RNA sequence: GGGAACGACUCGAGUAGAGUCGAAAAAAAGAAGGCCACUCUGGCUGCUUUGAAUAGAUUAUAGGAGGCCAUGAUUGGAAGCAGAGAGACCAGUUAGGAAAUCUGUUGCACUGGCCUUGCCAAGAGAGGAGAGUGUAUGGAUUGGGAUGCAAUUGAAGAUAUAAUGGACUUUCGAGUCCAUUAUAUCAAAAGAAACAACAACAACAAC
Reactivity to DMS in 0.01 (KOAc 150mM, MgCl2 10mM, bicine 150mM(pH8.5), 24C), signal-to-noise 1, nucleotides 027 to 156: a010a030a100g000a040a070g000g030c020c010a110c100u000c060u010g010g020c010u000g010c040u010u010u010g050a130a150u010a110g010a150u010u000a180u000a070g020g000a070g030g000c000c030a050u000g010a160u000u090g020g010a100a060g010c020a050g010a130g020a110g000a230c030c000a070g030u010u010a130g020g000a060a130a100u000c020u000g020u010u000g000c050a050c060u000g000g010c040c030u000u000g000c070c010a050a090g010a200g010a070g010g010a070g000a080g000u000g000u010a110u000g010g000a130u010u000g000g000g010a120u000g030c030a030a090u000u010g000a120a150
Reactivity to 2A3 in 0.01 (KOAc 150mM, MgCl2 10mM, bicine 150mM(pH8.5), 24C), signal-to-noise 2, nucleotides 027 to 156: a000a000a000g100a010a000g050g000c020c000a060c090u130c090u060g000g020c000u000g050c020u050u070u090g070a110a040u100a090g040a090u120u190a090u170a230g030g100a000g000g010c010c010a010u060g070a220u020u190g050g000a040a010g030c020a010g010a010g000a010g010a040c040c000a060g030u110u130a040g070g000a000a000a090u030c000u040g090u070u060g030c010a000c040u020g030g000c000c020u000u070g010c040c000a020a020g060a000g010a000g070g010a030g010a000g010u010g000u040a060u040g000g000a030u000u050g010g010g000a000u070g020c050a080a090u120u140g020a150a020